[RMDB]
An RNA of 207 nucleotides, treated with 2A3 and read out base by base. Values cover nucleotides 27 to 156. The reactions ran in a buffer of 150 mM KOAc, 10 mM MgCl2 and 150 mM bicine (pH 8.5), at 24 C.
RNA sequence: GGGAACGACUCGAGUAGAGUCGAAAAGACAAUAGAUGGUGUAACUUGAGGUUAGCAACAAGAUCACAAAAUGAGAUGAAUACAGCGCUCUCAUCAGUGAACACCUCAGGUGUCAAGGGAGUAAGUUGGGACAAGAGAAACAAAAAAUGGUGCGCAACGACUAGAACGAGUUCGCUCGUUCUAGUCGAAAAGAAACAACAACAACAAC
Reactivity to 2A3 in 0.01 (KOAc 150mM, MgCl2 10mM, bicine 150mM(pH8.5), 24C), signal-to-noise 1, nucleotides 027 to 156: g030a010c040a060a050u020a110g030a030u070g050g100u030g040u100a040a000c020u030u030g020a000g000g010u100u140a050g120c010a030a090c010a100a030g000a090u120c020a020c010a050a140a060a000u050g010a020g040a030u130g070a130a070u230a070c040a010g090c030g010c040u030c000u000c040a010u030c000a000g050u020g020a000a060c000a010c030c000u000c000a020g000g000u110g030u050c040a060a040g010g030g000a040g000u030a030a050g000u100u120g000g010g010a030c020a070a000g000a000g000a020a030a030c030a050a150a000a000a010a080u090g080g050u050g010c080g000c040a070a000